[RMDB]
RNA sequence: GGGAACGACUCGAGUAGAGUCGAAAAACGAGUCCGUACGCGGACUCGAAGGGCCCCAGAAGAGCAAGGGGCCCAAACCUACCACUCAUUAGAUGCAUGGAAAUCACUAGGUGAUACGUCACCUAGAACACGCUUUUAAGCUUCGGCUUAAAAGCAACCGGAUAGUACAGUUCGCUGUACUAUCCGGAAAAGAAACAACAACAACAAC
Reactivity to 2A3 in 0.01 (KOAc 150mM, MgCl2 10mM, bicine 150mM(pH8.5), 24C), signal-to-noise 2, nucleotides 027 to 156: a000c000g000a000g000u000c000c010g010u010a000c270g020c010g070g000a000c000u000c000g000a000a010g000g000g010c000c000c000c000a090g090a240a040g030a110g080c060a090a070g010g000g000g010c000c010c020a000a000a000c010c000u040a050c020c040a050c020u060c020a090u090u180a100g080a130u130g080c110a080u070g030g100a050a090a080u130c030a070c040u000a010g010g000u000g000a010u000a040c160g070u000c010a010c000c000u000a000g000a010a020c070a010c060g000c000u000u010u000u010a000a000g000c010u020u120c230g070g000c010u000u010a000a010a000a000g010c000a000a020